[RMDB]
RNA sequence: GGGAACGACUCGAGUAGAGUCGAAAACUCGCCAAUAUGGUGAAUCACCAUCUCUACUAAAGAUACACAAAUUAGCUGGGCAUGGUGGUGCGCGCCUACUCCCAGCUAUCGGGAGGCUGAGGCAGGAGAAUCACUAGAAUCAGGGAGGUGGAGGUUAACGCUGAUAUAGUUUCGACUAUAUCAGCGUAAAAGAAACAACAACAACAAC
Reactivity to DMS in 0.01 (KOAc 150mM, MgCl2 10mM, bicine 150mM(pH8.5), 24C), signal-to-noise 1, nucleotides 027 to 156: c000u000c020g040c000c030a080a120u000a120u010g030g010u010g000a150a070u000c020a070c020c010a080u000c020u000c000u000a080c020u010a030a080a040g030a070u000a060c120a100c070a040a100a230u000u000a050g010c040u000g010g000g050c230a050u010g000g030u000g000g000u000g000c080g040c000g100c010c040u010a010c090u000c010c020c010a080g060c070u010a010u010c060g040g000g010a050g050g020c030u000g000a060g020g020c030a080g010g000a090g000a100a090u000c060a000c040u000a080g020a100a080u020c040a050g000g010g020a020g010g020u000g000g020a050g000g000u000u000a040
Reactivity to 2A3 in 0.01 (KOAc 150mM, MgCl2 10mM, bicine 150mM(pH8.5), 24C), signal-to-noise 2, nucleotides 027 to 156: c000u020c010g060c030c000a140a110u120a140u210g030g000u060g060a060a120u100c020a020c050c000a030u000c030u000c010u040a120c020u090a140a050a080g130a060u210a090c080a030c020a100a090a150u090u070a020g010c010u010g010g010g000c050a050u040g000g010u000g020g000u040g020c080g000c000g000c020c000u030a040c010u060c000c000c010a010g040c100u050a040u070c020g000g010g000a000g020g020c060u070g030a020g000g000c010a020g050g060a040g010a010a080u030c000a010c020u040a030g060a100a050u060c020a020g030g010g010a020g010g010u030g020g030a020g010g010u020u050a040

This 207-nucleotide RNA was probed chemically with DMS and 2A3. For DMS the reverse transcriptase was MarathonRT. For 2A3 the reverse transcriptase was SuperScript II with manganese. The 2A3 profile rests on 1,293 reads.